Chemical mapping of a 177-nucleotide RNA with DMS and 2A3. The data come from the RNA Mapping Database (RMDB), library OK2TRN. Reactivities are rounded to 0.1 and cut off at 0 and 3. The 2A3 profile rests on 7,586 reads. High DMS reactivity at an A or C suggests that its Watson-Crick edge is free. The reactions ran in a buffer of 150 mM KOAc, 10 mM MgCl2 and 150 mM bicine (pH 8.5), at 24 C.

RNA sequence: GGGAACGACUCGAGUAGAGUCGAAAACCUCCAGGGCGAGGAACUCGUCAUUCAUCGUGAUCACCGUCGCCGGAGCCGUCGGUCGCGGCGAUCUCGAGUUCGCACGCGUCCGCGAGUCGCUUGAGGCGUUCUCAGAAGUUUUCGAACUUCUGAGAACAAAAGAAACAACAACAACAAC
Reactivity to DMS in 0.01 (KOAc 150mM, MgCl2 10mM, bicine 150mM(pH8.5), 24C), signal-to-noise 5, nucleotides 027 to 126: c090c010u000c070c060a140g010g010g000c020g000a110g000g000a060a050c060u000c220g010u000c070a090u010u000c200a100u000c140g020u000g010a040u000c070a080c040c020g000u000c100g030c020c000g000g010a080g020c110c090g010u000c020g020g000u000c040g020c000g010g010c010g010a010u010c030u000c120g010a100g010u000u000c020g010c050a120c040g020c030g000u000c010c010g010c020g000a070g000u010c040g000c010u000u010g000a120g000g000c130
Reactivity to 2A3 in 0.01 (KOAc 150mM, MgCl2 10mM, bicine 150mM(pH8.5), 24C), signal-to-noise 4, nucleotides 027 to 126: c000c010u020c030c030a160g080g000g000c010g010a020g030g010a070a050c050u020c050g050u020c040a030u130u140c060a080u080c060g060u030g040a060u050c030a020c080c010g200u100c050g000c030c000g000g010a040g060c070c050g150u220c010g010g000u020c010g000c000g010g010c010g000a020u000c040u020c040g140a250g030u010u010c040g000c070a210c050g020c030g010u000c010c010g020c010g010a020g090u090c040g000c120u060u080g060a060g060g080c070